[RMDB]
RNA sequence: GGGAACGACUCGAGUAGAGUCGAAAAUUAGGCACAAGAUGGCUCGUGGGGAUACCGGAUCCCCAUUUAUAUGAUCAACCGAAUCAUACGGUUACAAGCUGUCUUAAAAAUAAUCACUGCAACCGGCAGUCCACUCUUCAUUCGUGAAGAGUGGACUAAAAGAAACAACAACAACAAC
Reactivity to DMS in 0.01 (KOAc 150mM, MgCl2 10mM, bicine 150mM(pH8.5), 24C), signal-to-noise 2, nucleotides 027 to 126: u010u010a060g000g020c070a090c090a070a040g020a020u000g000g020c000u000c130g020u010g000g030g000g000a020u000a140c070c130g000g020a300u000c000c000c000c000a000u000u010u000a110u000a050u010g000a110u000c040a020a110c130c050g020a050a020u020c080a050u000a070c010g010g000u000u000a020c080a060a030g000c020u010g000u020c000u010u030a030a010a020a050a090u010a030a100u010c070a100c150u000g000c060a070a140c050c020g000g000c280